Chemical mapping of a 177-nucleotide RNA with DMS and 2A3. Values cover nucleotides 27 to 126. For 2A3 the reverse transcriptase was SuperScript II with manganese. The reactions ran in a buffer of 150 mM KOAc, 10 mM MgCl2 and 150 mM bicine (pH 8.5), at 24 C. The data come from the RNA Mapping Database (RMDB), libraries RFM100 and RFMREP. DMS (dimethyl sulfate) methylates the pairing face of unpaired adenines and cytosines. DMS adducts were read by reverse transcription with MarathonRT.

[RMDB]
RNA sequence: GGGAACGACUCGAGUAGAGUCGAAAAAAAUGAUUUAGGACGUCAUUGAUGGCUUAGAAUGGGGAAAAUUGAAUCGGUAGAAUGUGAUUUGUGAGUUGUUCACUGACACGUGGCAACUCGUAUUCGCCAUAGGUGCGGUUUUCGAACCGCACCUAUGAAAAGAAACAACAACAACAAC
Reactivity to DMS in 0.01 (KOAc 150mM, MgCl2 10mM, bicine 150mM(pH8.5), 24C), signal-to-noise 3, nucleotides 027 to 126: a050a020a020u020g010a040u020u000u020a100g000g030a060c140g020u000c010a070u010u000g020a080u010g000g010c070u010u010a040g010a100a060u010g000g000g010g000a030a020a030a100u000u000g010a030a070u000c080g010g020u010a070g010a050a070u010g010u010g000a060u000u010u010g010u010g000a050g000u000u000g020u010u020c010a020c000u020g000a140c230a100c270g010u000g000g000c010a000a000c010u000c010g000u000a020u000u000c010g000c080
Reactivity to 2A3 in 0.01 (KOAc 150mM, MgCl2 10mM, bicine 150mM(pH8.5), 24C), signal-to-noise 4, nucleotides 027 to 126: a000a000a000u120g030a050u090u050u110a060g040g050a010c040g000u070c010a000u010u080g060a070u120g110g000c030u010u040a000g030a130a040u110g000g010g020g100a060a040a050a050u130u170g030a040a050u030c060g060g020u040a030g040a180a060u130g010u060g020a070u030u110u250g060u030g000a000g000u000u020g010u220u300c010a000c000u090g160a060c040a030c200g000u000g000g000c000a000a000c000u000c000g000u050a040u000u030c000g000c000